Structure probing data (DMS and 2A3) for a 207-nucleotide construct. DMS adducts were read by reverse transcription with MarathonRT. For 2A3 the reverse transcriptase was SuperScript II with manganese. Source: RMDB library M2RFPK, as collected in RNAgym. The RNA was probed in 150 mM KOAc, 10 mM MgCl2 and 150 mM bicine (pH 8.5) at 24 C. The DMS profile rests on 5,885 reads. Reactivities are rounded to 0.1 and cut off at 0 and 3.
RNA sequence: GGGAACGACUCGAGUAGAGUCGAAAAGCAUCGACGAAGGUCCUGCCAUGAGACCGUAACGAGGACAUGUCGCCUCGAAUGGCGUCGGGGAGCCGGCAGCUUACCCCAAGGAUGAGCGCCUAAUGCCUAUACCCGAUUCGCUUCGGCGAAUCGGGAACAUAUUCAUUUGCUUCGGCAAAUGAAUAUGAAAAGAAACAACAACAACAAC
Reactivity to DMS in 0.01 (KOAc 150mM, MgCl2 10mM, bicine 150mM(pH8.5), 24C), signal-to-noise 3, nucleotides 027 to 156: g020c040a070u010c040g010a080c060g030a100a100g010g020u000c010c020u000g000c020c130a130u000g000a100g000a050c020c040g020u010a080a150c000g000a060g010g020a140c060a150u010g020u010c060g010c000c010u010c040g010a110a080u000g010g020c000g000u000c040g000g010g050g020a100g020c050c020g000g010c070a140g010c040u030u000a090c000c000c020c050a120a160g010g010a060u000g000a120g030c030g020c010c010u020a060a070u000g010c010c020u000a190u000a080c000c000c000g030a050u000u000c000g000c000u000u010c230g040g030c020g020a000a000u000c010g000g010g000a010a010
Reactivity to 2A3 in 0.01 (KOAc 150mM, MgCl2 10mM, bicine 150mM(pH8.5), 24C), signal-to-noise 8, nucleotides 027 to 156: g050c020a060u100c040g080a070c030g050a180a000g040g000u030c020c020u060g100c040c020a170u140g040a070g010a090c030c020g030u030a020a030c020g000a010g000g020a030c050a120u250g040u140c100g020c010c000u010c010g030a040a110u110g020g000c010g030u040c050g010g000g010g010a020g030c040c030g060g000c030a040g000c020u040u190a250c000c010c000c030a020a050g080g020a070u120g030a020g020c010g030c020c030u090a100a050u090g020c010c010u090a100u080a140c000c010c000g000a000u000u000c000g000c010u040u030c200g100g000c010g010a000a000u000c010g000g000g000a000a000